RNA sequence: GGGAACGACUCGAGUAGAGUCGAAAAGGGGUCGGGAGAUCCUGUUGGCUUUUGACGCUCUGAAGCCUCCACGGAGCGAUAAGCCAACUGCGUAGGAUAGAUCGACGAUCGACGGAGGCACCCAAAAUCAUGGUAACUCUUCGGAGUUACCAUGAAAGCACUGGAUAGAGUUCGCUCUAUCCAGUGCAAAAGAAACAACAACAACAAC
Reactivity to 2A3 in 0.01 (KOAc 150mM, MgCl2 10mM, bicine 150mM(pH8.5), 24C), signal-to-noise 2, nucleotides 027 to 156: g080g020g010g010u020c040g030g070g120a140g020a020u010c020c000u030g000u000u010g000g020c010u030u100u090u260g150a140c070g000c000u010c000u020g050a090a030g010c010c000u010c000c000a050c020g000g000a030g000c050g080a160u060a100a000g000c000c000a000a000c030u090g070c100g270u300a090g010g090a080u090a100g080a030u040c010g050a040c010g010a060u060c010g040a080c050g020g000a010g010g040c010a030c030c020c020a100a080a000a050u060c000a000u010g000g000u000a000a000c000u010c010u030u070c300g040g000a000g000u000u000a000c000c010a000u000g000a000a000a000

Chemical mapping of a 207-nucleotide RNA with 2A3. The RNA was probed in 150 mM KOAc, 10 mM MgCl2 and 150 mM bicine (pH 8.5) at 24 C. The data come from the RNA Mapping Database (RMDB), library RNAMAK. For 2A3 the reverse transcriptase was SuperScript II with manganese.